[RMDB]
About this RNA:
This 207-nucleotide RNA was probed chemically with 2A3. For 2A3, 710 sequencing reads were counted.
RNA sequence: GGGAACGACUCGAGUAGAGUCGAAAAGCCGCCUUCGGGCGGCCCUAUCUCCUAAGUCGACUGAGGCCAGUGCUAGAUCAGUGUCGGAAACGACACAGAUCUUGGACCACUGGCUCCCCACCAGUCGAUAUGGAACCGCAGCGCUUUCGAGCGCUAAACUAUAUAACCGGUUCGCCGGUUAUAUAGUAAAAGAAACAACAACAACAAC
Reactivity to 2A3 in 0.01 (KOAc 150mM, MgCl2 10mM, bicine 150mM(pH8.5), 24C), signal-to-noise 1, nucleotides 027 to 156: g000c020c000g040c070c110u090u090c170g240g000g080c020g030g000c010c000c000u030a030u020c110u030c020c010u140a300a010g060u000c000g000a000c000u000g000a030g050g000c000c000a000g000u010g050c050u030a000g000a000u020c020a060g000u010g010u000c000g030g070a170a050a060c030g000a000c000a000c000a070g000a000u010c000u070u200g030g050a060c090c000a000c010u000g000g060c000u010c010c000c000c020a010c000c000a000g010u010c000g000a000u020a000u070g000g010a030a020c010c000g020c170a020g000c000g020c030u090u020u250c290g150a010g000c000g020c010u010a130a070
2A3 adducts were read by reverse transcription with SuperScript II with manganese.